Notes:
The record gives the reactivity of an RNA of 207 nucleotides to DMS and 2A3. Source: RMDB library M2RFPK, as collected in RNAgym. For DMS the reverse transcriptase was MarathonRT.
RNA sequence: GGGAACGACUCGAGUAGAGUCGAAAAGCUGGUUUAGGGUUCCAGGCUAGCCCUAUCUAUCGGUCGAGAUGCGAGCGCUUAAGCUCAAAUUGAGUGGCUGAGUUAGUGGUGAACGUAUCCCUAUGUUAAAACGGUAGCUGCUUCGGCAGCUACCGAAGUAUCUACCUAAGUUCGCUUAGGUAGAUACAAAAGAAACAACAACAACAAC
Reactivity to DMS in 0.01 (KOAc 150mM, MgCl2 10mM, bicine 150mM(pH8.5), 24C), signal-to-noise 2, nucleotides 027 to 156: g020c030u000g000g000u000u000u010a040g020g010g010u000u020c030c050a160g050g030c040u000a220g000c010c000c010u000a020u000c040u000a040u010c010g040g020u000c000g020a290g000a050u000g020c300g000a030g050c030g020c260u020u010a110a210g000c000u010c020a030a200a120u000u000g000a250g010u010g020g040c040u010g000a060g000u010u000a040g030u000g040g020u000g000a060a110c050g000u010a050u010c000c010c010u000a170u010g000u000u000a040a070a080a120c010g010g000u000a000g030c000u000g020c010u000u010c300g040g010c010a000g030c010u000a000c010c000g000a000a030
Reactivity to 2A3 in 0.01 (KOAc 150mM, MgCl2 10mM, bicine 150mM(pH8.5), 24C), signal-to-noise 4, nucleotides 027 to 156: g000c000u010g000g050u030u060u090a030g010g010g010u090u070c010c010a020g050g090c030u020a020g020c000c000c010u000a020u030c030u030a140u050c000g020g010u020c030g010a010g000a130u010g010c010g010a010g000c030g020c190u270u280a180a050g000c000u020c000a010a050a000u000u020g010a030g050u230g040g000c000u010g020a000g010u000u010a030g010u110g120g010u020g030a060a010c050g030u090a110u110c000c000c000u040a070u110g070u050u120a060a080a030a040c010g000g000u000a000g000c000u010g030c040u050u110c220g090g000c000a000g000c000u000a000c000c000g000a000a000
The 2A3 profile rests on 3,424 reads. For DMS, 4,227 sequencing reads were counted.